[RMDB]
RNA sequence: GGGAACGACUCGAGUAGAGUCGAAAACAGAUUCUUCCAUUCAAAAACUAUGGGUGUAUCCCUAUAAUCCGAGGGAAACUUGAAGUCCGGAAAGAUGGUCUUGGGAGGAUUAAGGUGGUACUGGGCCAGUCACUAUGCUAUUCGUAGCAUAGUGACUAAAAGAAACAACAACAACAAC
Reactivity to 2A3 in 0.01 (KOAc 150mM, MgCl2 10mM, bicine 150mM(pH8.5), 24C), signal-to-noise 4, nucleotides 027 to 126: c040a030g070a130u050u010c020u060u010c020c010a040u040u150c060a000a050a040a070a110c090u120a100u110g020g000g030u060g030u050a070u090c010c000c000u040a050u060a100a050u080c070c040g010a090g000g040g000a060a110a020c020u040u130g090a120a030g030u010c020c010g050g080a080a050a030g110a050u090g000g040u000c010u070u030g030g000g010a030g000g010a000u040u050a100a040g030g000u080g010g000u030a020c050u040g050g010g000c030c030
Reactivity to DMS in 0.01 (KOAc 150mM, MgCl2 10mM, bicine 150mM(pH8.5), 24C), signal-to-noise 3, nucleotides 027 to 126: c090a190g010a040u020u000c020u000u020c000c010a030u000u030c070a070a100a070a070a070c130u000a050u010g000g010g010u010g010u050a080u020c050c050c000u030a050u000a080a030u010c050c120g030a160g000g000g010a030a020a020c070u000u000g020a130a110g000u000c020c040g000g000a100a080a070g000a050u010g010g010u010c060u000u000g010g000g010a050g000g010a070u010u000a090a090g030g000u030g000g000u000a020c080u010g000g000g000c080c120